Notes:
The record gives the reactivity of an RNA of 177 nucleotides to DMS. Conditions: 150 mM KOAc, 10 mM MgCl2 and 150 mM bicine (pH 8.5), 24 C. DMS adducts were read by reverse transcription with MarathonRT. The DMS profile rests on 3,182 reads. Source: RMDB library TTRINS, as collected in RNAgym.

RNA sequence: GGGAACGACUCGAGUAGAGUCGAAAAGAUAUGGACUCCCGCUCACAAAGGCGAUGAAGCAACAGCUACUGGGUCGGAAACGACCUGUAGACAUGCUUCAUCGCCUUUGUGAUGGAGUCCUAAGUCAGAUGCCUAUAAUCUUCGGAUUAUAGGCAUCAAAAGAAACAACAACAACAAC
Reactivity to DMS in 0.01 (KOAc 150mM, MgCl2 10mM, bicine 150mM(pH8.5), 24C), signal-to-noise 2, nucleotides 027 to 126: g020a070u010a300u000g000g000a020c000u000c000c010c000g000c040u000c010a010c000a000a000a000g010g010c010g020a010u010g010a010a000g030c000a020a130c300a240g010c000u000a000c010u050g060g020g010u000c000g020g010a080a070a280c020g010a010c000c000u000g000u000a010g000a050c100a190u000g000c000u000u000c010a010u000c000g000c010c000u000u000u000g000u000g000a010u000g010g010a000g000u000c010c000u000a000a060g000u000c070a140